[RMDB]
RNA sequence: GGGAACGACUCGAGUAGAGUCGAAAACACCUGGAUCGCGGCCCGGAACAGGGUGGCCGAUUUCGCGGCCAGGAUCACCGGUUUGAGGAUCGGCGGCGGAAAGUGUUCGAACGCAUCGCAACUAGUGCGUCAUCACUAAAUUCGUUUAGUGAUGACGAAAAGAAACAACAACAACAAC
Reactivity to 2A3 in 0.01 (KOAc 150mM, MgCl2 10mM, bicine 150mM(pH8.5), 24C), signal-to-noise 6, nucleotides 027 to 126: c070a040c000c010u020g060g030a210u080c050g000c010g030g000c000c010c000g030g030a130a070c080a130g090g000g020u030g030g030c030c020g030a040u050u060u100c090g000c010g020g000c000c010a030g040g020a030u080c040a040c040c030g030g010u100u070u230g130a110g040g030a020u040c010g010g000c000g010g010c020g000g070a060a070a060g100u080g040u030u080c040g030a070a030c020g020c030a050u100c040g010c050a050a100c070u100a070g100u020g140
Reactivity to DMS in 0.01 (KOAc 150mM, MgCl2 10mM, bicine 150mM(pH8.5), 24C), signal-to-noise 4, nucleotides 027 to 126: c090a150c000c000u020g000g010a060u010c010g020c030g010g000c240c050c010g000g020a080a080c130a130g000g010g010u020g000g030c010c000g010a130u000u010u020c030g010c010g010g020c010c030a050g030g010a090u000c130a120c020c020g000g000u020u010u020g000a110g010g010a070u010c010g010g010c020g030g000c030g000g000a050a060a060g000u020g010u000u000c030g000a060a070c070g000c070a050u020c050g010c030a100a070c110u010a090g000u010g010
An RNA of 177 nucleotides, treated with 2A3 and DMS and read out base by base.
The 2A3 profile rests on 6,149 reads.
Values cover nucleotides 27 to 126.
DMS adducts were read by reverse transcription with MarathonRT.